[RMDB]
RNA sequence: GGGAACGACUCGAGUAGAGUCGAAAAAUAACAUUAAUGACUCUUUUUUCACCAGCAUUAACUACGGUACUGGUUUUAAAGCACCAACCUUGUAUCAACUUUAUGAUAGCUACGCUGGUAAUGCUGAACUUGAGCUAGAAACAUCAGAAAGUUGGGAUGUUAGAAAGUAUUUCGAUACUUUCUAACAAAAAGAAACAACAACAACAAC
Reactivity to DMS in 0.01 (KOAc 150mM, MgCl2 10mM, bicine 150mM(pH8.5), 24C), signal-to-noise 2, nucleotides 027 to 156: a130u000a090a190c040a240u000u000a060a140u020g000a060c050u010c000u000u000u000u000u000u000c080a130c070c010a020g000c020a030u000u000a060a050c030u000a060c090g040g000u000a020c020u000g000g010u020u000u010u010a020a070a080g000c050a100c050c050a070a060c100c080u000u020g010u000a090u000c040a050a030c020u000u000u000a000u020g020a110u000a060g020c030u000a020c050g020c000u000g020g000u000a020a030u000g000c030u000g000a030a120c070u000u000g010a030g000c000u000a090g010a160a090a080c040a080u000c060a090g030a070a060a110g000u010u000g010g020g040a200
Reactivity to 2A3 in 0.01 (KOAc 150mM, MgCl2 10mM, bicine 150mM(pH8.5), 24C), signal-to-noise 4, nucleotides 027 to 156: a000u150a050a030c070a130u130u260a120a080u120g050a050c010u060c000u110u090u040u010u150u210c090a030c080c000a010g000c010a020u050u050a160a060c030u080a030c120g040g020u040a040c030u050g030g080u030u030u000u110a090a080a010g070c020a020c070c020a020a070c010c000u050u120g030u050a030u040c030a030a110c010u150u170u120a090u160g040a040u030a030g020c020u040a020c090g000c070u040g000g010u000a010a010u070g000c000u050g020a050a060c010u030u070g030a010g020c010u050a060g080a060a110a020c010a060u070c010a020g140a170a070a050g020u020u020g040g010g050a050
Annotation:
This 207-nucleotide RNA was probed chemically with DMS and 2A3. The DMS profile rests on 3,678 reads. Values cover nucleotides 27 to 156. DMS adducts were read by reverse transcription with MarathonRT. The 2A3 profile rests on 2,191 reads. The reactions ran in a buffer of 150 mM KOAc, 10 mM MgCl2 and 150 mM bicine (pH 8.5), at 24 C. 2A3 adducts were read by reverse transcription with SuperScript II with manganese.